[RMDB]
RNA sequence: GGGAACGACUCGAGUAGAGUCGAAAACCGUAGGAAGACAGAAGCAUCGAUCUGUGCAGCAGCACUCGCUGUAUUCGAAAGAGUACAGCUGGGAAGGCCACAGGGAGCUUCUGAAUCUUCCUAAACGGAAAGACCGCUAUGUUCGCAUAGCGGUCAACUCUUGCUCAUAGUUCGCUAUGAGCAAGAGAAAAGAAACAACAACAACAAC
Reactivity to 2A3 in 0.01 (KOAc 150mM, MgCl2 10mM, bicine 150mM(pH8.5), 24C), signal-to-noise 3, nucleotides 027 to 156: c000c000g020u020a030g000g010a010a000g000a000c000a010g000a020a000g010c030a150u300c030g070a070u020c010u000g020u010g030c160a110g000c000a010g050c030a070c050u050c020g020c000u000g010u010a010u000u000c010g040a090a060a080g000a010g010u000a000c000a010g000c040u150g000g010g010a080a040g100g000c020c000a000c000a000g000g000g020a000g000c000u000u000c010u000g000a000a000u000c000u000u000c000c000u000a010a050a000c010g020g020a170a070a060g020a010c020c000g000c000u000a000u010g030u020u110c200g020c160a000u000a000g000c020g000g000u000c000a000a000
Reactivity to DMS in 0.01 (KOAc 150mM, MgCl2 10mM, bicine 150mM(pH8.5), 24C), signal-to-noise 1, nucleotides 027 to 156: c000c020g010u000a020g020g030a020a000g040a100c020a040g020a030a030g010c000a230u000c200g000a020u010c020u020g000u000g000c060a090g010c020a100g020c090a290c000u010c170g020c010u010g020u060a000u000u000c000g000a230a070a300g000a020g020u000a010c000a000g000c000u000g050g000g000a170a150g030g030c070c000a020c010a060g000g000g020a050g000c010u000u000c030u030g000a030a070u000c000u020u000c010c000u000a020a020a070c000g030g000a090a170a300g000a000c010c000g030c010u000a000u000g000u000u030c300g000c020a030u010a010g030c010g000g000u000c010a010a000

Chemical mapping of a 207-nucleotide RNA with 2A3 and DMS.
2A3 adducts were read by reverse transcription with SuperScript II with manganese.
For 2A3, 2,790 sequencing reads were counted.